An RNA of 207 nucleotides, treated with DMS and 2A3 and read out base by base. For DMS the reverse transcriptase was MarathonRT. The reactions ran in a buffer of 150 mM KOAc, 10 mM MgCl2 and 150 mM bicine (pH 8.5), at 24 C. High 2A3 reactivity points to a flexible backbone, as in loops and unpaired stretches. The DMS profile rests on 2,616 reads. The 2A3 profile rests on 894 reads.

RNA sequence: GGGAACGACUCGAGUAGAGUCGAAAAGGACCUAUCUUCGGAUAGGUCCGACAAGAGCCAUUAGCUCAGUUGGUAGAGCAUCUGACUUUUAAUCAGAGGGUCGAAGGUUCGAGUCCUUCAUGGCUCACCACGGGAGCCUACAAUUCGUUGUAGGCAAUUCUAUUGAAGUCUUCGGACUUCAAUAGAAAAAAGAAACAACAACAACAAC
Reactivity to DMS in 0.01 (KOAc 150mM, MgCl2 10mM, bicine 150mM(pH8.5), 24C), signal-to-noise 2, nucleotides 027 to 156: g010g010a050c000c010u000a020u010c000u000u000c300g020g010a040u000a000g000g030u000c000c000g010a040c050a100a230g010a040g010c000c010a060u000u000a180g010c000u010c000a260g000u010u010g010g030u010a050g000a040g030c050a200u000c020u000g020a020c050u000u010u010u010a120a140u000c010a050g000a040g020g020g010u010c020g000a040a020g010g000u000u010c050g000a300g000u010c000c020u000u000c010a040u000g000g020c000u010c000a080c000c040a020c010g020g030g000a080g030c000c010u010a000c000a060a120u000u010c220g030u000u010g020u000a000g000g000c030a030a040
Reactivity to 2A3 in 0.01 (KOAc 150mM, MgCl2 10mM, bicine 150mM(pH8.5), 24C), signal-to-noise 1, nucleotides 027 to 156: g010g000a000c000c000u000a020u020c000u000u050c180g010g000a000u000a000g000g000u000c000c000g000a000c000a030a100g000a000g020c000c000a000u000u000a020g010c010u020c010a020g040u150u180g150g260u200a000g000a000g000c000a010u000c000u000g020a040c060u180u250u220u300a100a040u060c000a030g000a030g060g000g000u090c010g000a000a000g000g000u000u000c020g000a000g000u020c000c000u000u000c000a000u000g000g000c000u000c000a010c000c000a030c020g020g100g040a090g000c000c010u000a000c000a020a050u040u070c110g070u060u050g010u000a010g000g000c010a000a010